[RMDB]
RNA sequence: GGGAACGACUCGAGUAGAGUCGAAAAUGGGCGCAUGCCCUCAAUGAAGCCACUUGCGAACUUGGGGCGACAGGCGGUGUCGAGACGUCCCCUUCGGAGAGAGUAUACGCUUUCGAUGAUGUAGGGGCUCUGACUCGGAGUUCGCUCCGAGUCAGAGAAAAGAAACAACAACAACAAC
Reactivity to 2A3 in 0.01 (KOAc 150mM, MgCl2 10mM, bicine 150mM(pH8.5), 24C), signal-to-noise 1, nucleotides 027 to 126: u000g000g000g060c120g000c020a040u130g020c000c010c000u000c000a020a060u130g020a040a000g070c000c000a070c070u010u100g040c010g020a000a020c010u070u080g000g000g000g000c040g000a030c030a010g150g000c000g000g060u130g030u120c050g020a000g000a050c020g080u020c000c000c000c040u000u000c010g010g000a000g000a000g000a000g010u060a060u010a200c100g000c000u000u040u010c000g050a110u020g000a000u040g000u060a070g000g000g010g000
Reactivity to DMS in 0.01 (KOAc 150mM, MgCl2 10mM, bicine 150mM(pH8.5), 24C), signal-to-noise 2, nucleotides 027 to 126: u040g020g050g010c000g000c300a140u060g030c010c000c000u000c090a060a060u000g030a090a140g000c040c100a140c060u020u000g000c000g010a030a010c110u000u000g010g000g000g000c000g020a000c190a160g000g070c090g060g000u000g000u000c000g000a040g010a040c180g000u000c020c000c000c000u000u000c000g000g020a300g000a000g030a020g000u000a020u070a280c250g000c000u000u000u000c000g010a260u110g000a010u030g000u030a000g000g060g000g000